[RMDB]
Source: RMDB library OK2TRN, as collected in RNAgym.
This 177-nucleotide RNA was probed chemically with DMS and 2A3.
For 2A3, 41,985 sequencing reads were counted.
2A3 adducts were read by reverse transcription with SuperScript II with manganese.
Conditions: 150 mM KOAc, 10 mM MgCl2 and 150 mM bicine (pH 8.5), 24 C.
High 2A3 reactivity points to a flexible backbone, as in loops and unpaired stretches.
RNA sequence: GGGAACGACUCGAGUAGAGUCGAAAAUCAUGCUAUCACAAGCUAACUGGUUGACGUCCAGUUAGUUCUGAGCGAGAGUUCAGGACGGGUCUUUGACGUCAACGAAGACUUUGUCGUGAUAGCAUGCCUAGUUGAAUCAAUUCGUUGAUUCAACUAGAAAAGAAACAACAACAACAAC
Reactivity to DMS in 0.01 (KOAc 150mM, MgCl2 10mM, bicine 150mM(pH8.5), 24C), signal-to-noise 8, nucleotides 027 to 126: u020c000a000u000g010c000u000a000u000c000a000c010a150a050g000c010u000a020a020c010u000g000g010u000u000g010a100c210g010u000c000c200a010g010u000u000a020g010u000u000c000u000g000a010g010c000g010a220g000a190g010u000u000c000a000g010g000a010c000g000g000g000u000c010u000u000u000g000a080c110g010u000c170a040a070c010g010a020a010g000a040c020u000u000u010g030u000c040g000u000g000a010u000a000g000c000a000u000g000c300
Reactivity to 2A3 in 0.01 (KOAc 150mM, MgCl2 10mM, bicine 150mM(pH8.5), 24C), signal-to-noise 6, nucleotides 027 to 126: u130c000a000u000g000c000u000a000u000c000a000c010a030a010g000c000u010a010a010c010u010g010g040u030u070g090a030c040g070u000c000c000a000g000u000u010a010g000u010u000c000u000g000a000g000c000g010a070g000a000g030u000u000c000a000g000g000a000c000g000g000g010u000c000u000u020u040g030a040c040g090u090c050a010a020c010g000a010a000g010a020c030u030u100u300g020u020c030g000u000g000a000u000a000g000c000a000u000g000c000